[RMDB]
RNA sequence: GGGAACGACUCGAGUAGAGUCGAAAAGCCAAUAUGUUGCCUUUAUCUGCAUUUGCACCUGCAUCUUUUGCGUUUGUUUUGUUUUUGACUCCACAAACAAAAUCAAGUUCUGUCGAUACAGUAUGUGUCUUUGUUUGAGAUUCGUCUCAAACAAAGAAAAAGAAACAACAACAACAAC
Reactivity to 2A3 in 0.01 (KOAc 150mM, MgCl2 10mM, bicine 150mM(pH8.5), 24C), signal-to-noise 6, nucleotides 027 to 126: g070c010c000a020a030u220a080u140g070u030u060g030c020c000u040u090u120a090u070c030u040g030c040a080u000u030u130g020c000a030c010c000u030g000c020a080u040c030u060u150u070u120g050c040g050u010u000u060g070u000u020u040u010g040u010u040u010u030u070g040a030c030u000c030c010a020c030a040a070a030c030a010a080a060a070u110c040a070a040g010u070u030c030u030g090u070c040g020a030u040a120c010a020g100u090a080u100g140u040g040
Reactivity to DMS in 0.01 (KOAc 150mM, MgCl2 10mM, bicine 150mM(pH8.5), 24C), signal-to-noise 5, nucleotides 027 to 126: g020c020c030a060a120u050a090u010g000u000u000g010c040c030u000u010u020a060u020c040u000g020c040a070u000u000u000g010c030a040c070c020u000g010c060a040u000c050u000u020u000u020g030c070g000u000u010u000g020u010u010u000u010g000u000u010u000u010u010g000a080c070u010c120c050a040c090a060a050a040c080a040a040a040a070u040c070a060a110g000u000u010c040u000g010u010c110g010a120u010a040c080a040g010u010a050u010g020u000g000
The data come from the RNA Mapping Database (RMDB), libraries RFM100 and RFMREP.
This 177-nucleotide RNA was probed chemically with 2A3 and DMS.
Conditions: 150 mM KOAc, 10 mM MgCl2 and 150 mM bicine (pH 8.5), 24 C.
Reactivities are given for positions 27 through 126.
High 2A3 reactivity points to a flexible backbone, as in loops and unpaired stretches.